[RMDB]
RNA sequence: GGGAACGACUCGAGUAGAGUCGAAAAACGAGGUACGCCUCGAAAAUAUGACCGGUGUCAUAGCCUCUAGCACACAGUGGUCGCGUGGGUUCAACUCCCCCCCUUUUCCGAGGGUAUCGGAAACCAAAAAACACAAUUUGGUUCGCCAAAUUGUGAAGAAUUAAUAAUACUUCGGUAUUAUUAAUUCAAAAGAAACAACAACAACAAC
Reactivity to DMS in 0.01 (KOAc 150mM, MgCl2 10mM, bicine 150mM(pH8.5), 24C), signal-to-noise 2, nucleotides 027 to 156: a160c010g000a030g030g040u000a050c230g010c020c040u000c000g010a050a120a070a140u000a080u020g000a030c000c050g020g010u000g000u000c080a040u010a090g020c060c010u000c060u000a100g000c100a090c060a080c050a100g000u000g040g020u000c030g010c120g000u010g030g010g050u000u000c120a100a300c090u020c000c000c000c020c010c000c020u000u000u000u000c000c000g000a070g000g010g000u010a050u000c020g070g000a030a040a080c070c040a010a030a070a030a100a140c000a030c000a010a020u000u000u000g010g020u000u000c300g030c000c010a000a020a030u010u000g000u010g000a030a140
Reactivity to 2A3 in 0.01 (KOAc 150mM, MgCl2 10mM, bicine 150mM(pH8.5), 24C), signal-to-noise 5, nucleotides 027 to 156: a000c010g000a010g010g000u060a030c150g060c000c010u010c020g020a090a040a030a060u170a100u140g030a030c030c060g070g030u090g030u070c090a120u060a120g040c030c020u130c090u130a020g030c060a020c000a000c010a090g090u060g110g020u030c010g000c020g060u080g010g030g020u100u180c040a070a060c070u050c010c000c000c000c000c000c020u020u070u010u010c000c000g000a000g010g020g010u060a010u000c000g000g000a000a000a010c010c030a050a070a020a050a050a000c000a000c000a000a000u000u000u000g010g010u010u020c060g020c030c000a000a000a000u000u000g000u000g000a010a010
Notes
Conditions: 150 mM KOAc, 10 mM MgCl2 and 150 mM bicine (pH 8.5), 24 C. An RNA of 207 nucleotides, treated with DMS and 2A3 and read out base by base. For DMS, 3,632 sequencing reads were counted.